[RMDB]
RNA sequence: GGGAACGACUCGAGUAGAGUCGAAAAUAGUCACUAAUUCUACCUUAGGCGUCCUCCUCCGAAUGGUUAGAGUAACGACUUCGGGCAUAACCAGCUUCCAUGGUGUGACGGGCGGUGUGUACAAGGCCGCACACGUAAGUUUCGACUUACGUGUGCGAAAAGAAACAACAACAACAAC
Reactivity to 2A3 in 0.01 (KOAc 150mM, MgCl2 10mM, bicine 150mM(pH8.5), 24C), signal-to-noise 1, nucleotides 027 to 126: u070a010g040u030c020a010c070u090a030a090u170u140c040u080a000c010c010u050u090a070g050g000c020g020u010c030c030u060c020c000u000c020c040g040a060a040u210g070g040u030u040a020g050a050g180u080a110a000c030g050a070c000u040u050c120g010g030g000c050a010u040a150a060c020c010a010g020c030u110u070c020c020a040u100g080g000u040g020u020g090a020c000g000g000g040c070g020g030u050g000u020g000u000a040c040a050a060g100g000c070
Reactivity to DMS in 0.01 (KOAc 150mM, MgCl2 10mM, bicine 150mM(pH8.5), 24C), signal-to-noise 3, nucleotides 027 to 126: u000a090g020u000c040a070c050u000a110a070u010u010c040u010a070c010c010u000u010a160g010g010c130g020u020c060c040u010c050c010u000c020c000g010a060a040u010g010g010u010u010a080g000a130g010u000a050a060c070g030a110c110u000u000c100g010g000g000c070a070u010a070a060c030c020a100g010c050u000u000c040c070a110u000g000g000u000g010u000g000a030c040g000g000g010c050g010g000u000g030u000g000u000a100c150a060a080g040g010c160